[RMDB]
RNA sequence: GGGAACGACUCGAGUAGAGUCGAAAAUGGUAGUCCGCCACUCUAAGGGGACGCCUUUAGAAGAAGAGGCUAGGUGGUCUUCCGGUGUGGGAUACUUGGUAAUAUGUAACGCUAAUUGCAUAAGAUUAAAACUUUGCAUACUUCGGUAUGCAAAGAACGAGCUGUAUUGGUUCGCCAAUACAGCUCGAAAAGAAACAACAACAACAAC
Reactivity to 2A3 in 0.01 (KOAc 150mM, MgCl2 10mM, bicine 150mM(pH8.5), 24C), signal-to-noise 2, nucleotides 027 to 156: u110g030g000u010a100g070u000c020c030g090c180c000a050c040u170c130u140a080a150g000g000g010g030a010c020g010c000c000u090u100u100a180g020a150a020g000a050a020g010a020g070g000c070u020a050g020g040u050g050g020u040c000u070u000c030c000g000g010u040g020u000g000g050g010a060u070a050c040u010u050g080g030u070a000a050u050a160u090g030u040a050a020c060g020c170u140a160a000u010u080g020c030a040u080a120a070g020a090u070u210a040a040a010a090c000u000u020u000g000c010a000u000a000c000u000u040c070g040g000u010a000u000g000c010a000a000a000g000a010a010
The record gives the reactivity of an RNA of 207 nucleotides to 2A3. For 2A3 the reverse transcriptase was SuperScript II with manganese. The reactions ran in a buffer of 150 mM KOAc, 10 mM MgCl2 and 150 mM bicine (pH 8.5), at 24 C. It was measured as part of the RMDB library M2RFPK.